[RMDB]
RNA sequence: GGGAACGACUCGAGUAGAGUCGAAAACACAGGCGACUUAAUCGGAGAGCCGUUACACGCGAGGAAGAUGAAAUUAUUACAUCAGUAGACUCGAGAUUACUACAACUUGCGUUGCUAUCUCAAAUAACUGGAGAAUAAGCUUCGGCUUAUUCUCCAGAAAAGAAACAACAACAACAAC
Reactivity to 2A3 in 0.01 (KOAc 150mM, MgCl2 10mM, bicine 150mM(pH8.5), 24C), signal-to-noise 1, nucleotides 027 to 126: c070a010c010a020g060g000c070g000a060c040u120u160a070a110u140c010g020g120a010g010a010g060c000c010g000u000u040a030c040a000c020g020c000g000a010g010g000a170a030g020a040u050g040a000a060a150u230u220a140u160u040a120c000a000u000c010a010g000u000a000g080a050c000u000c100g010a020g030a020u130u140a040c000u000a000c010a040a020c010u000u010g000c020g060u050u050g000c030u090a070u090c000u000c030a090a110a060u150a210a090
Reactivity to DMS in 0.01 (KOAc 150mM, MgCl2 10mM, bicine 150mM(pH8.5), 24C), signal-to-noise 1, nucleotides 027 to 126: c150a090c130a090g000g060c000g000a060c020u010u000a130a170u000c050g010g020a260g010a030g000c010c000g000u000u010a050c020a050c010g000c070g000a020g000g000a110a060g000a010u000g010a040a120a130u010u000a030u060u000a140c020a020u000c020a180g000u000a080g020a070c050u000c020g000a070g010a190u000u000a170c010u000a000c050a170a110c010u000u000g000c010g010u000u000g000c070u000a080u000c030u000c020a060a120a080u000a060a070